[RMDB]
Chemical mapping of a 177-nucleotide RNA with 2A3 and DMS.
The reactions ran in a buffer of 150 mM KOAc, 10 mM MgCl2 and 150 mM bicine (pH 8.5), at 24 C.

RNA sequence: GGGAACGACUCGAGUAGAGUCGAAAAACGCUCAUCACCCACUGGGGACGUUAACUCGUUAAGCGAAAAGACUUGAGAUCCAACAUUGGUAAAAUCAUUUAGAUCAACUUCCACAGCCACUGUUGCAGUCCCGUAUAGGUUUCGACCUAUACGGGACAAAAGAAACAACAACAACAAC
Reactivity to 2A3 in 0.01 (KOAc 150mM, MgCl2 10mM, bicine 150mM(pH8.5), 24C), signal-to-noise 2, nucleotides 027 to 126: a030c020g010c020u020c010a080u050c020a070c000c060c010a060c110u110g000g010g000g080a000c030g000u070u050a100a030c060u020c050g010u050u100a100a030g050c030g100a060a000a050a110g060a050c030u070u060g000a010g040a100u050c020c000a020a050c030a030u040u060g070g010u090a070a100a020a000u140c080a070u110u130u240a070g000a080u060c020a040a050c010u100u030c020c050a000c050a020g000c030c000a010c030u060g020u040u030g030c010a000
Reactivity to DMS in 0.01 (KOAc 150mM, MgCl2 10mM, bicine 150mM(pH8.5), 24C), signal-to-noise 2, nucleotides 027 to 126: a180c130g010c020u000c050a030u000c120a070c050c000c030a180c130u000g000g010g010g020a040c050g010u010u000a110a160c190u000c020g030u000u020a100a090g000c070g050a090a080a130a090g010a030c050u010u000g010a030g000a060u000c090c040a050a110c050a040u000u000g000g030u000a040a060a090a060u040c030a070u010u000u000a070g010a020u000c050a060a060c100u000u000c010c020a100c050a150g000c010c030a030c110u000g000u010u010g020c180a140

Notes:
The data come from the RNA Mapping Database (RMDB), library OK2TST.